Structure probing data (2A3 and DMS) for a 177-nucleotide construct. The reactions ran in a buffer of 150 mM KOAc, 10 mM MgCl2 and 150 mM bicine (pH 8.5), at 24 C. The 2A3 profile rests on 2,180 reads. 2A3 adducts were read by reverse transcription with SuperScript II with manganese.

RNA sequence: GGGAACGACUCGAGUAGAGUCGAAAAUAAAAUCAAAAUAAGAGAGGUAAUGUCUGAGAAUAGAAUGGAUUGGAAUUUGUCCUAUUGGCACUGGUUAACCGUAAUUACCACCACCAAUAUAAAAAAACAUCAAUAAUAGGUUCGCCUAUUAUUGAUGAAAAGAAACAACAACAACAAC
Reactivity to 2A3 in 0.01 (KOAc 150mM, MgCl2 10mM, bicine 150mM(pH8.5), 24C), signal-to-noise 3, nucleotides 027 to 126: u060a000a060a000a010u060c030a000a090a050a130u200a300a040g070a010g020a010g090g070u050a130a020u030g000u010c020u020g040a030g050a170a060u060a120g140a100a050u050g030g030a010u010u100g040g080a090a070u040u030u110g020u000c010c030u020a050u030u070g020g040c050a000c060u020g020g010u060u050a060a000c030c010g000u030a020a070u060u030a020c010c000a000c020c020a010c000c000a060a000u210a010u160a100a160a010a000a010a000a020
Reactivity to DMS in 0.01 (KOAc 150mM, MgCl2 10mM, bicine 150mM(pH8.5), 24C), signal-to-noise 3, nucleotides 027 to 126: u020a020a090a060a070u010c020a070a070a080a110u010a070a090g020a070g000a050g010g000u000a030a040u000g010u010c040u010g000a080g000a070a080u010a060g010a090a050u010g010g010a070u010u020g010g000a070a130u000u000u000g000u010c010c030u000a050u010u000g000g020c080a090c160u000g010g010u000u020a050a070c110c140g000u010a040a060u000u000a040c010c000a020c260c060a080c030c020a000a020u000a070u030a020a010a070a070a060a080a100